[RMDB]
RNA sequence: GGGAACGACUCGAGUAGAGUCGAAAACAAAUACCAUCCAGUAAUAGUUUGCGUCAUAAGUUGUGGAUACGGGUGCAACCACAGCUGUUUCUCACGUCUUUUCUAAAUUAUUACGUGGGAUCAGGUGAUUAUCGCGGCCAUUCGUGGCCGCGAUAAUAAAAGAAACAACAACAACAAC
Reactivity to 2A3 in 0.01 (KOAc 150mM, MgCl2 10mM, bicine 150mM(pH8.5), 24C), signal-to-noise 1, nucleotides 027 to 126: c000a000a170a000u180a080c050c070a000u000c000c050a000g080u030a030a030u000a000g010u060u030u030g030c040g050u050c040a070u070a040a000g000u030u030g000u000g000g000a070u010a300c040g040g080g020u080g090c070a030a000c030c000a010c000a000g110c000u000g000u000u260u030c070u030c000a000c010g050u000c050u050u060u220u000c170u250a170a000a040u180u000a000u070u030a000c300g120u080g050g000g000a030u030c010a050g010g050u030g000